[RMDB]
RNA sequence: GGGAACGACUCGAGUAGAGUCGAAAAGGGCAUCAGGGAAGGCUGGCCCCCACACACCCAGCCCAGCCUCAGGCCUGGAGUUAGGGAAGCCAGUCAUGGCAGGGCUGUUCUUGCCAGUGGGUCCAGGACUGCACGUCCCUUUCGAGGGACGUGCAGUAAAAGAAACAACAACAACAAC
Reactivity to DMS in 0.01 (KOAc 150mM, MgCl2 10mM, bicine 150mM(pH8.5), 24C), signal-to-noise 2, nucleotides 027 to 126: g000g000g070c090a030u010c030a300g000g000g070a190a100g060g040c010u000g000g000c020c080c010c060c050a050c240a170c040a180c100c020c040a060g010c030c030c000a060g000c090c030u010c140a170g000g000c200c010u000g000g000a030g100u000u040a180g000g000g020a070a120g000c110c000a000g030u000c020a090u000g000g000c020a000g060g000g000c210u070g020u000u030c000u000u000g030c020c050a050g030u000g030g140g000u070c110c010a200g010g000
Reactivity to 2A3 in 0.01 (KOAc 150mM, MgCl2 10mM, bicine 150mM(pH8.5), 24C), signal-to-noise 2, nucleotides 027 to 126: g050g000g000c030a170u030c070a150g090g000g130a120a000g070g010c000u040g010g000c010c010c000c000c000a090c000a000c000a000c030c000c010a000g000c010c000c000a040g110c000c050u070c010a030g050g020c000c080u030g010g010a220g090u080u060a030g050g030g030a050a000g050c000c000a030g000u030c030a020u050g020g000c010a020g020g000g000c100u080g070u160u130c000u010u030g000c030c000a030g050u120g000g020g020u000c000c010a040g030g160
This 177-nucleotide RNA was probed chemically with DMS and 2A3.
The 2A3 profile rests on 1,353 reads.
The RNA was probed in 150 mM KOAc, 10 mM MgCl2 and 150 mM bicine (pH 8.5) at 24 C.
For DMS the reverse transcriptase was MarathonRT.